Chemical mapping of a 177-nucleotide RNA with DMS and 2A3. The reactions ran in a buffer of 150 mM KOAc, 10 mM MgCl2 and 150 mM bicine (pH 8.5), at 24 C. The data come from the RNA Mapping Database (RMDB), library OK2TST. The DMS profile rests on 1,208 reads.

RNA sequence: GGGAACGACUCGAGUAGAGUCGAAAAAUGGACAGCAAGGGUCGAAAUGUUAUCGUCUGUGAUAACGGCACUGGGUUCGUUAAGUGCGGAUAUGCCGGCAGCAAUUUCCCCACCCACAUUUUUCCCACACCUCAUGCUGGUUCGCCAGCAUGAGGUGAAAAGAAACAACAACAACAAC
Reactivity to DMS in 0.01 (KOAc 150mM, MgCl2 10mM, bicine 150mM(pH8.5), 24C), signal-to-noise 1, nucleotides 027 to 126: a080u000g020g020a080c050a060g020c090a050a110g010g010g000u000c060g020a110a050a080u020g030u000u000a020u000c070g000u000c180u000g000u000g010a020u010a010a030c050g000g050c090a020c040u000g000g000g010u020u000c030g020u010u000a070a110g010u000g020c060g010g010a100u000a050u000g050c030c050g010g070c030a080g010c050a070a210u000u000u000c000c000c000c080a130c090c020c030a070c070a100u000u000u000u000u000c010c020c000a250
Reactivity to 2A3 in 0.01 (KOAc 150mM, MgCl2 10mM, bicine 150mM(pH8.5), 24C), signal-to-noise 1, nucleotides 027 to 126: a000u030g000g080a020c010a000g180c070a080a200g000g000g030u060c020g020a000a050a080u150g050u090u040a050u080c070g130u050c070u150g180u130g060a070u020a100a040c030g020g000c000a020c050u090g020g060g040u030u050c020g000u050u130a110a070g060u070g050c040g000g010a020u110a010u110g020c030c010g010g000c010a000g000c000a040a050u040u080u040c000c000c040c000a040c020c010c000a060c020a050u070u000u010u040u000c000c000c010a040